[RMDB]
RNA sequence: GGGAACGACUCGAGUAGAGUCGAAAAGAGCAUCGUGUGAAGCUGUAUCCGCCGGAAGCGCGUAAAACCUUGCGCUCUUUCUCGUCGACGGAAGCCGCGAAACUUAUUGGUGUCAAUGACGGCUACCACCACGAUCAUGGUUCGCCAUGAUCGUGGUAAAAGAAACAACAACAACAAC
Reactivity to 2A3 in 0.01 (KOAc 150mM, MgCl2 10mM, bicine 150mM(pH8.5), 24C), signal-to-noise 5, nucleotides 027 to 126: g060a010g010c040a070u020c040g010u000g040u040g150a190a040g020c000u030g010u110a130u020c010c030g000c000c000g020g020a100a020g020c000g000c010g040u050a030a070a090a160c060c150u020u070g040c000g000c000u010c010u010u110u020c080u000c030g190u060c090g030a110c020g020g040a020a010g000c030c000g010c000g020a030a060a020c060u100u150a120u130u240g050g020u070g030u030c030a060a130u190g030a080c060g000g000c010u040a080c000c010
Reactivity to DMS in 0.01 (KOAc 150mM, MgCl2 10mM, bicine 150mM(pH8.5), 24C), signal-to-noise 2, nucleotides 027 to 126: g010a050g030c130a060u010c000g080u000g010u030g010a140a130g010c000u000g000u010a090u020c040c020g020c010c090g010g030a040a010g010c060g000c000g000u000a060a040a110a180c210c110u000u000g000c080g000c000u000c010u000u010u000c030u020c120g030u040c030g010a030c070g010g040a160a120g020c000c010g010c030g020a080a060a120c130u020u050a030u030u060g000g000u010g000u000c040a050a100u080g000a090c090g010g010c010u000a090c010c040
Structure probing data (2A3 and DMS) for a 177-nucleotide construct. For 2A3 the reverse transcriptase was SuperScript II with manganese. Conditions: 150 mM KOAc, 10 mM MgCl2 and 150 mM bicine (pH 8.5), 24 C. It was measured as part of the RMDB library OK1LIB. Values cover nucleotides 27 to 126. The DMS profile rests on 2,604 reads.